The data come from the RNA Mapping Database (RMDB), library TTRDEL.
Chemical mapping of a 177-nucleotide RNA with 2A3 and DMS.
For DMS the reverse transcriptase was MarathonRT.
For DMS, 2,924 sequencing reads were counted.
For 2A3, 5,156 sequencing reads were counted.
2A3 adducts were read by reverse transcription with SuperScript II with manganese.
The RNA was probed in 150 mM KOAc, 10 mM MgCl2 and 150 mM bicine (pH 8.5) at 24 C.
RNA sequence: GGGAACGACUCGAGUAGAGUCGAAAAGAUAUGGAUCGGAGCGACGAUCGUCUGGUCGGAAACGACCAGGACGGGAGCUCCAUCCUAAGUCAAAACUAAUCAUAGUAGUUCGCUACUAUGAUUAGAACUAGUAAAUCCUCUUCGGAGGAUUUACUAGAAAAGAAACAACAACAACAAC
Reactivity to 2A3 in 0.01 (KOAc 150mM, MgCl2 10mM, bicine 150mM(pH8.5), 24C), signal-to-noise 3, nucleotides 027 to 126: g010a040u070a020u140g010g010a010u060c270g020g000a000g010c020g300a300c030g020a110u060c000g000u020c010u000g000g010u000c010g020g020a060a060a050c010g000a000c000c010a000g040g070a040c010g000g010g000a010g000c000u000c000c000a000u000c000c000u010a100a020g020u020c030a030a000a090a150c010u020a000a000u000c000a010u000a010g010u000a000g010u010u100c300g050c150u010a010c000u010a000u020g000a000u000u010a000g000a000a000
Reactivity to DMS in 0.01 (KOAc 150mM, MgCl2 10mM, bicine 150mM(pH8.5), 24C), signal-to-noise 3, nucleotides 027 to 126: g010a040u000a300u010g010g010a020u000c140g020g000a010g020c010g010a080c200g010a030u010c000g010u020c000u000g000g010u010c000g010g010a080a090a190c020g010a000c000c000a010g000g000a020c000g010g010g000a130g010c000u000c010c000a010u000c000c000u000a050a130g000u000c030a100a070a060a200c010u010a000a000u000c000a010u000a000g000u000a010g010u010u020c290g010c010u000a000c000u000a000u010g000a010u000u000a000g000a100a190